[RMDB]
RNA sequence: GGGAACGACUCGAGUAGAGUCGAAAAACGAGAGCGACGCCCUUGGCGCAGCUCUUGCAUCGUACGGGUACGACUGCGUUCCUACUAGGCACGCAGACCUCACUUCGGCUGAGUCGUGCUCGGCCUACGCAGGUAUGCGAUUCGUCGCAUACCUGCGAAAAGAAACAACAACAACAAC
Reactivity to 2A3 in 0.01 (KOAc 150mM, MgCl2 10mM, bicine 150mM(pH8.5), 24C), signal-to-noise 3, nucleotides 027 to 126: a010c030g010a010g000a000g020c010g060a030c010g010c010c010c070u130u300g030g000c020g000c020a020g000c010u000c000u000u030g000c010a090u080c070g120u080a070c040g000g000g000u010a010c020g020a060c030u010g000c010g010u010u000c030c000u030a250c110u190a080g010g000c030a010c010g000c010a020g060a210c010c010u030c010a040c050u120u170c100g170g000c080u030g020a000g010u050c030g000u040g000c000u010c010g030g000c000c020u020a050
Reactivity to DMS in 0.01 (KOAc 150mM, MgCl2 10mM, bicine 150mM(pH8.5), 24C), signal-to-noise 3, nucleotides 027 to 126: a120c020g000a020g000a020g030c000g000a180c010g030c000c000c300u010u010g020g020c010g060c300a080g000c020u000c000u010u000g010c020a160u000c040g000u010a110c030g000g020g010u000a010c020g000a130c010u000g030c000g000u000u000c000c000u000a130c260u000a070g000g000c050a040c020g010c010a020g010a080c120c020u000c070a010c110u000u020c110g010g030c290u000g000a040g000u000c010g040u000g040c020u000c000g020g010c030c060u010a080
An RNA of 177 nucleotides, treated with 2A3 and DMS and read out base by base. For DMS the reverse transcriptase was MarathonRT. The reactions ran in a buffer of 150 mM KOAc, 10 mM MgCl2 and 150 mM bicine (pH 8.5), at 24 C.